RNA sequence: GGGAACGACUCGAGUAGAGUCGAAAACUGUGAGACAGACAGAGAGUGAGUGUGUGACUGACUGACUCUGAGUCUGAGUGAGUCUGUGACUGUGACACACAGACUGAGACUCUGUGAGUGUCUGACAUCAUGCCACUUCGUUCGCGAAGUGGCAUGAAAAAGAAACAACAACAACAAC
Reactivity to DMS in 0.01 (KOAc 150mM, MgCl2 10mM, bicine 150mM(pH8.5), 24C), signal-to-noise 2, nucleotides 027 to 126: c040u000g020u010g010a040g020a060c030a060g020a080c030a040g000a020g020a080g020u000g010a220g050u000g000u010g000u000g010a060c040u000g000a090c150u010g010a020c020u000c010u000g010a180g000u000c120u010g000a070g010u000g010a020g010u000c000u010g010u010g020a180c130u010g000u000g020a090c060a080c000a030c020a020g010a060c030u000g000a160g000a160c030u000c000u000g000u000g000a080g010u000g000u010c010u000g000a020c060a300
Reactivity to 2A3 in 0.01 (KOAc 150mM, MgCl2 10mM, bicine 150mM(pH8.5), 24C), signal-to-noise 1, nucleotides 027 to 126: c010u010g020u040g020a000g000a020c010a000g050a010c000a000g040a000g010a010g070u110g030a070g000u000g000u030g000u010g140a040c040u020g030a000c000u000g000a000c040u000c030u050g050a030g160u090c030u040g010a010g060u090g040a000g010u030c000u070g080u100g110a110c060u090g090u080g150a010c020a020c010a000c000a030g070a040c030u000g020a030g020a020c020u030c020u020g020u040g070a250g080u060g030u050c000u010g020a030c000a050